[RMDB]
RNA sequence: GGGAACGACUCGAGUAGAGUCGAAAAAGCUCAUGCCACUACGGUGGCAUGAGCAAAGCAGCACGGGAGAGCGACCCGUUAGCUGGCAGACAAUCCAGUCCCCAUCCCACGGCAACUGUGGAUGGGACUGGCUUUCUGCGCUCUUCAGAUCUCUGAAAAGAGUUGGUGCAUUCGCACUAAAUCUUUGUAUUGCGACGAACUUGUUUGUAGCGGAUACCGCAUCGCUCGGGGGGAACGCUGUUCUCCUCGCGGUUCCGUCGCCCCAAACUGAUACCUUCGGGUAUCAGAAAAGAAACAACAACAACAAC
Reactivity to DMS in 0.01 (KOAc 150mM, MgCl2 10mM, bicine 150mM(pH8.5), 24C), signal-to-noise 5, nucleotides 027 to 266: a120g010c010u000c000a010u000g010c010c000a020c010u000a100c170g040g030u000g010g060c010a000u010g010a010g020c010a000a010a070g010c010a010g020c020a030c000g000g000g000a160g010a010g000c000g000a030c000c000c000g010u000u010a050g030c000u000g000g010c010a020g000a030c300a030a020u000c000c000a020g010u000c090c040c020c050a020u000c040c010c010a060c170g000g020c290a100a120c160u010g020u010g010g000a020u000g000g010g010a000c000u000g000g000c080u000u000u000c000u000g010c000g010c110u010c050u010u000c050a090g010a230u010c090u000c020u000g000a070a020a010a010g000a020g010u000u000g000g010u000g000c010a200u020u040c210g010c000a010c000u000a010a030a040u000c010u000u000u000g000u010a080u010u010g010c080g000a130c100g000a100a130c220u010u000g000u010u000u010g010u010a150g010c010g000g000a020u010a020c000c000g000c000a060u000c000g000c000u000c010g030g010g000g000g000g000a010a010c020g020c220u030g010u000u000c000u000c000c000u000c000g000c000g010g000u000u000c010c000g010u010c070g020c020c000c010c040a090a120a220
Reactivity to 2A3 in 0.01 (KOAc 150mM, MgCl2 10mM, bicine 150mM(pH8.5), 24C), signal-to-noise 3, nucleotides 027 to 266: a020g000c010u010c030a010u010g000c000c000a040c020u080a050c270g140g020u010g000g000c010a000u030g010a010g010c010a000a000a030g010c010a000g000c010a000c010g000g000g000a050g000a000g020c010g000a010c000c000c010g000u030u020a010g000c010u020g080g020c020a010g000a030c090a010a010u020c000c000a010g000u050c100c050c020c000a010u050c040c050c000a010c050g140g030c100a190a090c200u200g050u110g000g000a000u010g020g000g000a010c000u010g010g000c000u000u010u010c000u000g010c050g030c010u070c040u140u020c010a020g030a220u060c080u020c020u190g060a040a060a010a010g010a010g030u060u080g000g010u040g000c060a120u180u300c190g010c000a000c000u030a030a030a070u040c030u030u060u050g130u160a190u110u190g050c040g030a060c020g010a070a070c050u090u130g120u210u190u230g090u240a020g010c000g000g000a040u160a130c000c000g000c020a040u010c000g010c000u000c020g010g000g010g000g000g010a050a010c110g090c300u210g030u000u010c010u020c010c000u000c000g000c010g000g020u000u000c000c000g000u000c000g010c020c000c010c000a050a170a090